The record gives the reactivity of an RNA of 177 nucleotides to DMS and 2A3. For DMS the reverse transcriptase was MarathonRT. Reactivities are given for positions 27 through 126.
[RMDB]
RNA sequence: GGGAACGACUCGAGUAGAGUCGAAAAAUUAACCCAGCCUUAAUGAAGAGCAGGACAAAAGGUUCGUCUGCAAACACUCCAUGGUAGACAGAGGAUGGGGAAAUGGAUGUGGACUAUUUGGAAGUAACGAUUUUGUAAUGUUCGCAUUACAAAAUCGAAAAGAAACAACAACAACAAC
Reactivity to DMS in 0.01 (KOAc 150mM, MgCl2 10mM, bicine 150mM(pH8.5), 24C), signal-to-noise 3, nucleotides 027 to 126: a060u000u000a120a090c010c000c000a150g010c040c040u000u000a080a050u000g010a090a050g010a090g010c040a040g000g010a080c050a080a060a060a100g000g010u000u000c100g000u010c010u000g010c040a020a040a110c060a120c010u010c010c020a040u000g010g020u010a070g020a090c140a060g010a090g010g000a040u010g040g000g020g000a030a110a100u000g020g000a140u010g020u000g010g000a030c090u010a100u010u010u000g000g010a070a080g000u000a040a140
Reactivity to 2A3 in 0.01 (KOAc 150mM, MgCl2 10mM, bicine 150mM(pH8.5), 24C), signal-to-noise 2, nucleotides 027 to 126: a000u070u060a050a050c000c010c000a000g010c010c000u140u140a150a050u160g040a070a110g020a000g090c040a020g040g060a060c020a030a080a010a020g070g000u080u060c020g010u010c020u000g020c000a030a080a020c010a000c010u000c010c040a020u030g110g060u080a060g070a140c070a040g080a030g070g070a070u040g000g000g000g000a060a110a000u160g010g000a010u040g010u040g030g030a010c030u060a150u110u110u140g130g010a050a050g000u060a050a030